[RMDB]
RNA sequence: GGGAACGACUCGAGUAGAGUCGAAAAACAUGCCAACUCUCGUCUGCGCAUGGAACGUGGUAACGGUUCGACUGAAGAUUUAACUGCUCGCGUCCUUGAUUUGGCAUCGCCAAUCGGUCGUGGUCAGCGAAAAAGAUAUCUUCGGAUAUCUUUUUCGAAAAGAAACAACAACAACAAC
Reactivity to DMS in 0.01 (KOAc 150mM, MgCl2 10mM, bicine 150mM(pH8.5), 24C), signal-to-noise 9, nucleotides 027 to 126: a110c070a050u000g000c000c020a070a100c070u000c100u010c140g010u010c120u000g010c120g010c040a040u000g010g000a030a070c060g030u010g010g020u000a050a060c080g010g000u000u000c030g010a100c060u010g010a090a110g000a110u010u010u010a080a270c010u000g000c010u000c010g000c020g010u000c010c010u000u010g020a020u010u010u010g020g010c000a110u010c270g010c000c000a020a020u000c010g010g000u000c020g020u000g010g010u000c020a040g010
Reactivity to 2A3 in 0.01 (KOAc 150mM, MgCl2 10mM, bicine 150mM(pH8.5), 24C), signal-to-noise 8, nucleotides 027 to 126: a000c020a020u070g010c010c000a050a030c040u040c030u060c160g100u040c100u060g050c060g000c050a020u030g040g030a050a030c030g060u070g040g070u100a080a020c030g030g050u060u050c030g050a050c080u090g050a070a020g030a150u080u140u180a080a060c010u010g000c010u010c010g000c000g010u000c000c010u050u140g020a050u060u070u100g040g000c070a190u130c120g000c020c000a000a020u010c010g000g010u000c010g010u020g020g040u030c010a010g030
The record gives the reactivity of an RNA of 177 nucleotides to DMS and 2A3. DMS (dimethyl sulfate) methylates the pairing face of unpaired adenines and cytosines. The DMS profile rests on 17,659 reads. The data come from the RNA Mapping Database (RMDB), library OK2TST. The reactions ran in a buffer of 150 mM KOAc, 10 mM MgCl2 and 150 mM bicine (pH 8.5), at 24 C.